[RMDB]
RNA sequence: GGGAACGACUCGAGUAGAGUCGAAAACAACAGAUCGUUGAGGGACUCCAGGCCACGCCGGAUCUGAAGUCCGCUACCCAGCAGCGUCAAGCUCUGCAGUUCGAUCCGGGUGUCGCUGAACUGGCGAAUCGACGAGUCGGUUCGCCGACUCGUCGAUAAAAGAAACAACAACAACAAC
Reactivity to 2A3 in 0.01 (KOAc 150mM, MgCl2 10mM, bicine 150mM(pH8.5), 24C), signal-to-noise 1, nucleotides 027 to 126: c010a000a000c020a040g170a200u080c030g040u040u020g090a070g000g070g030a010c030u000c010c020a000g000g030c040c020a140c110g140c060c060g040g030a070u040c040u110g030a010a000g020u000c000c020g020c040u040a040c000c010c020a000g000c120a010g000c000g080u070c080a000a110g030c030u060c010u060g020c020a170g030u180u230c050g030a070u060c020c020g000g000g100u050g000u000c050g000c030u040g010a180a100c040u000g050g000c020g030a010
Reactivity to DMS in 0.01 (KOAc 150mM, MgCl2 10mM, bicine 150mM(pH8.5), 24C), signal-to-noise 1, nucleotides 027 to 126: c070a060a080c050a160g000a080u000c050g010u000u010g000a080g050g000g000a030c010u000c020c030a060g000g000c090c000a060c100g020c030c070g010g000a060u000c010u020g000a040a070g010u000c030c010g000c040u010a080c090c070c010a060g020c120a030g000c040g020u010c160a120a170g000c030u010c030u000g000c040a050g010u010u000c070g000a040u000c010c060g000g010g010u010g000u000c020g000c020u000g000a050a070c100u010g000g010c000g000a020